Annotation: Conditions: 150 mM KOAc, 10 mM MgCl2 and 150 mM bicine (pH 8.5), 24 C. An RNA of 177 nucleotides, treated with 2A3 and read out base by base.
[RMDB]
RNA sequence: GGGAACGACUCGAGUAGAGUCGAAAAGAUAUGGAAAUAACGUGGGAGUCGUGGAUCGGAAACGAUCCAUACGACAUCGAUCACGUAUUUCCUAAGUCAAAAGCUUCGUUGCUUCGGCAACGAAGCAGGAUCGUGAAUACUUCGGUAUUCACGAUCCAAAAGAAACAACAACAACAAC
Reactivity to 2A3 in 0.01 (KOAc 150mM, MgCl2 10mM, bicine 150mM(pH8.5), 24C), signal-to-noise 1, nucleotides 027 to 126: g020a000u020a010u020g000g070a020a030a010u100a300a090c010g010u000g000g090g000a140g000u000c010g000u000g010g030a000u000c010g030g000a000a000a000c010g020a010u000c010c010a060u160a020c090g020a010c020a060u300c100g060a070u000c000a000c000g000u000a010u010u010u000c000c020u000a000a000g000u020c010a000a020a070a220g000c000u010u010c010g060u020u010g000c000u030u140c300g140g000c000a010a030c000g030a000a000g000c020a000

About this RNA
The 2A3 profile rests on 2,762 reads.